[RMDB]
RNA sequence: GGGAACGACUCGAGUAGAGUCGAAAAAAGCCCUAUCCCUAGUGAUUAGCCUAGUCGUGAUUAGCGUGGUGGUGAUUAUUAUCCCACCGUGCGGGGCUGCACUUGGACGAAGAAUGGCUUAGAAAUCGUAGUUGAUCUAGUUCGCUAGAUCAACUACAAAAGAAACAACAACAACAAC
Reactivity to 2A3 in 0.01 (KOAc 150mM, MgCl2 10mM, bicine 150mM(pH8.5), 24C), signal-to-noise 2, nucleotides 027 to 126: a000a000g030c030c000c000u080a180u080c010c000c000u010a000g000u000g060a110u140u090a000g000c010c010u040a040g050u170c070g090u090g170a230u150u140a040g010c020g030u010g010g000u000g000g040u130g150a010u020u180a080u260u150a020u080c030c010c000a000c000c000g000u000g000c000g000g000g000g000c000u000g000c000a000c010u050u050g030g020a010c050g020a040a010g110a010a070u110g000g000c000u050u020a060g150a070a100a040u170c090
Reactivity to DMS in 0.01 (KOAc 150mM, MgCl2 10mM, bicine 150mM(pH8.5), 24C), signal-to-noise 2, nucleotides 027 to 126: a080a010g010c000c000c020u000a300u000c210c010c020u000a020g000u000g000a080u000u020a010g040c000c010u000a130g000u010c100g020u010g000a130u010u000a120g020c000g020u000g010g020u000g000g010u020g000a000u010u010a120u010u010a170u000c010c000c000a010c000c000g030u010g040c000g010g000g000g000c030u000g030c030a000c000u000u000g010g010a060c110g010a090a050g010a120a140u000g000g010c010u000u010a050g010a030a100a140u010c200
The record gives the reactivity of an RNA of 177 nucleotides to 2A3 and DMS. Values are in units of 0.01, from 0 to 300, in steps of 10. Source: RMDB library RFMREP, as collected in RNAgym. Reactivities are given for positions 27 through 126. The RNA was probed in 150 mM KOAc, 10 mM MgCl2 and 150 mM bicine (pH 8.5) at 24 C. For DMS, 1,377 sequencing reads were counted. For DMS the reverse transcriptase was MarathonRT. 2A3 adducts were read by reverse transcription with SuperScript II with manganese. The 2A3 profile rests on 1,509 reads.